Background:
The record gives the reactivity of an RNA of 177 nucleotides to 2A3 and DMS. The 2A3 profile rests on 9,466 reads. It was measured as part of the RMDB library TTRDEL. DMS adducts were read by reverse transcription with MarathonRT.
[RMDB]
RNA sequence: GGGAACGACUCGAGUAGAGUCGAAAAGAUAUGGACUCAAACUUGCACAUGCGCAGAUAUCGGAAACGAUGUAGCAUGUGAACUACAAGCGACCGAGUCCUAAGUCAAAGUAUCGUUCGCGAUACAAUCUAGGAUUACUGUUCGCAGUAAUCCUAGAAAAAGAAACAACAACAACAAC
Reactivity to 2A3 in 0.01 (KOAc 150mM, MgCl2 10mM, bicine 150mM(pH8.5), 24C), signal-to-noise 5, nucleotides 027 to 126: g030a010u100a030u160g000g000a000c000u000c000a070a060a060c000u010u050g000c000a000c000a010u010g000c030g040c140a070g080a300u240a020u080c010g000g030a070a060a050c000g000a000u020g040u120a060g010c010a000u010g000u000g010a010a000c010u150a040c010a020a000g030c030g170a110c200c100g010a020g000u000c000c010u030a070a010g030u000c060a130a020a090g000u010a010u010c030g010u060u100c300g010c020g120a000u000a010c020a010a080
Reactivity to DMS in 0.01 (KOAc 150mM, MgCl2 10mM, bicine 150mM(pH8.5), 24C), signal-to-noise 6, nucleotides 027 to 126: g010a040u010a300u000g000g000a020c010u020c000a040a200a100c000u000u000g020c000a020c010a010u000g000c000g030c220a140g010a060u000a010u000c000g000g000a130a090a190c000g010a030u000g000u000a170g010c000a000u010g000u000g000a040a030c090u020a300c000a000a010g020c030g010a250c300c210g000a010g000u010c010c000u000a020a110g010u000c040a060a100a130g010u000a010u000c000g030u010u020c280g040c020g010a010u000a010c010a090a110